An RNA of 177 nucleotides, treated with 2A3 and DMS and read out base by base. 2A3 is a SHAPE reagent: it acylates the 2'-hydroxyl of flexible nucleotides of all four kinds. It was measured as part of the RMDB libraries RFM100 and RFMREP.

RNA sequence: GGGAACGACUCGAGUAGAGUCGAAAAUGAUAGGUAUGAAAAGUGGCGUUGAAGCUGGAUAAGUUUAUAAAGAGUUUGAAUGAAGAAAUGAAAAGUAAAUAAGUUGAUGAUGAAUUGCAAAAAUAGAGGUAUGAUACAUCUUCGGAUGUAUCAUACCAAAAGAAACAACAACAACAAC
Reactivity to 2A3 in 0.01 (KOAc 150mM, MgCl2 10mM, bicine 150mM(pH8.5), 24C), signal-to-noise 2, nucleotides 027 to 126: u010g010a000u010a030g000g120u150a150u210g050a040a050a000a030g020u040g000g000c030g020u070u080g000a000a030g070c060u000g000g030a000u020a260a000g020u000u110u000a300u090a050a020a030g100a070g000u010u040u090g090a040a010u080g030a020a030g090a050a020a020u070g110a010a300a150a000g100u070a030a000a110u120a030a030g080u110u100g030a030u030g020a010u120g010a010a120u150u030g030c060a030a000a020a130a000u170a030g090a020
Reactivity to DMS in 0.01 (KOAc 150mM, MgCl2 10mM, bicine 150mM(pH8.5), 24C), signal-to-noise 2, nucleotides 027 to 126: u020g000a060u050a050g000g010u010a050u060g020a040a040a060a040g020u030g000g000c060g030u000u010g010a080a060g000c020u000g020g030a070u020a040a040g010u010u000u000a060u000a040a050a040g000a170g000u000u000u010g060a020a040u010g000a030a080g000a060a060a040u050g030a020a030a100a120g020u030a010a030a070u020a040a080g030u000u000g000a050u000g000a020u000g000a070a100u020u010g000c100a050a060a020a040a060u000a100g010a300